[RMDB]
RNA sequence: GGGAACGACUCGAGUAGAGUCGAAAAUUGCUCGACUAAUUUACACUGGAUCACCCGCCGCGCGCCGUUUGGCGUGGCAACGUUGCUGGAUCAGGAUGUGGAAAUCGACUUCAGCUCGCAGACCACAAAUAGAGCCAUAUUUCGAUAUGGCUCUAUUAAAAGAAACAACAACAACAAC
Reactivity to DMS in 0.01 (KOAc 150mM, MgCl2 10mM, bicine 150mM(pH8.5), 24C), signal-to-noise 5, nucleotides 027 to 126: u010u010g020c100u000c070g020a110c080u020a060a090u010u010u000a100c060a070c060u000g000g010a060u020c030a110c050c030c050g000c070c060g010c040g010c010g000c030c030g010u010u000u010g010g010c010g040u000g010g010c030a070a070c110g020u000u010g010c040u000g010g010a100u000c050a070g000g010a090u000g020u000g010g010a040a090a120u000c040g000a050c040u000u000c100a110g020c090u000c020g010c120a060g000a260c020c020a070c170a050
Reactivity to 2A3 in 0.01 (KOAc 150mM, MgCl2 10mM, bicine 150mM(pH8.5), 24C), signal-to-noise 2, nucleotides 027 to 126: u080u090g010c010u010c010g030a030c060u100a070a190u090u100u180a050c060a040c030u090g080g030a030u030c010a050c020c020c050g010c020c020g020c000g000c010g010c040c000g080u130u160u300g000g000c010g000u020g000g020c010a000a040c030g080u070u100g000c030u040g030g010a020u020c050a030g080g030a030u080g010u050g050g060a030a100a070u030c010g030a020c000u070u030c090a050g020c040u000c010g000c010a000g000a100c000c030a040c030a040